[RMDB]
RNA sequence: GGGAACGACUCGAGUAGAGUCGAAAAUAUUAGAUGCAUGGCAAAGAGUGGGCAUGCUUAGCCACAAUCAGAGUCAUGGAAUGGAGAAGCACAAGCAGUGUCCAGAGAAAGUAGGCCAUCUGACUUUAGCAGCAGGAUCACACAGGAUGUGAGCACAGGGUAAAUACCAGUUCGCUGGUAUUUACCCAAAAGAAACAACAACAACAAC
Reactivity to DMS in 0.01 (KOAc 150mM, MgCl2 10mM, bicine 150mM(pH8.5), 24C), signal-to-noise 1, nucleotides 027 to 156: u010a010u020u000a060g050a230u000g060c090a080u000g010g000c000a100a100a120g000a050g010u000g040g000g000c040a100u020g010c050u010u020a160g070c000c050a060c050a050a200u000c010a090g010a250g000u020c030a090u000g000g010a050a070u010g010g020a150g000a150a110g090c090a120c030a020a110g060c050a080g010u000g070u000c030c020a090g000a100g020a050a040a090g000u010a080g030g000c010c030a050u000c000u010g010a080c040u020u000u020a050g000c100a090g000c080a120g000g020a040u000c010a000c040a140c000a090g010g050a300u000g050u010g000a070g020c090a090c080a130
Reactivity to 2A3 in 0.01 (KOAc 150mM, MgCl2 10mM, bicine 150mM(pH8.5), 24C), signal-to-noise 2, nucleotides 027 to 156: u210a020u080u150a080g070a080u110g020c030a000u020g000g030c040a060a090a030g090a040g080u070g010g020g000c020a020u050g020c040u030u080a020g020c010c020a050c050a060a060u120c020a020g040a030g090u040c010a040u050g020g030a050a020u060g040g030a080g010a090a040g000c040a030c010a090a030g100c030a020g070u010g000u040c000c000a000g020a000g000a140a110a020g120u080a040g080g000c020c000a050u040c050u070g070a110c040u040u110u080a030g010c000a000g010c020a010g040g020a050u030c000a010c010a030c000a040g030g020a050u020g040u030g010a040g010c030a000c090a070
Source: RMDB library OK3TST, as collected in RNAgym. Structure probing data (DMS and 2A3) for a 207-nucleotide construct. For DMS, 1,707 sequencing reads were counted. For 2A3, 1,608 sequencing reads were counted. The reactions ran in a buffer of 150 mM KOAc, 10 mM MgCl2 and 150 mM bicine (pH 8.5), at 24 C.